[RMDB]
RNA sequence: GGGAACGACUCGAGUAGAGUCGAAAACUGGGCUGCACGCGCACUACAAUGUUAUUUCUAGGUAUAUUGUAAAGAUAAAGGAUAACUCGGUUGGGAUUGCGUUCUGUAAUGGACGCAUGAACCAGGAGUCUCAUUAUUACUUCGGUAAUAAUGAGACAAAAGAAACAACAACAACAAC
Reactivity to DMS in 0.01 (KOAc 150mM, MgCl2 10mM, bicine 150mM(pH8.5), 24C), signal-to-noise 4, nucleotides 027 to 126: c040u000g000g010g000c050u000g010c060a040c050g030c100g010c070a090c080u010a050c080a060a040u010g000u010u000a060u000u000u010c100u010a090g010g020u010a050u010a040u000u000g010u000a050a080a130g000a100u000a040a090a090g000g000a080u000a040a060c040u000c060g030g000u000u010g010g010g000a120u000u010g010c000g020u000u000c010u000g010u010a110a060u010g000g000a010c000g000c000a000u000g000a160a130c020c030a070g010g010a230
Reactivity to 2A3 in 0.01 (KOAc 150mM, MgCl2 10mM, bicine 150mM(pH8.5), 24C), signal-to-noise 3, nucleotides 027 to 126: c010u010g030g050g010c030u030g020c010a020c050g060c010g010c020a020c030u050a010c040a040a060u050g040u130u050a100u050u120u050c060u090a050g040g090u050a120u010a030u110u110g020u070a050a080a070g080a060u120a070a130a020g030g010a040u030a060a040c010u020c090g070g030u060u050g060g000g000a030u020u000g000c000g000u020u000c010u020g090u030a100a100u280g000g000a000c000g000c000a000u000g020a010a040c010c010a000g030g040a050

This 177-nucleotide RNA was probed chemically with DMS and 2A3. For DMS the reverse transcriptase was MarathonRT. For DMS, 4,718 sequencing reads were counted. It was measured as part of the RMDB library RFMREP. The RNA was probed in 150 mM KOAc, 10 mM MgCl2 and 150 mM bicine (pH 8.5) at 24 C.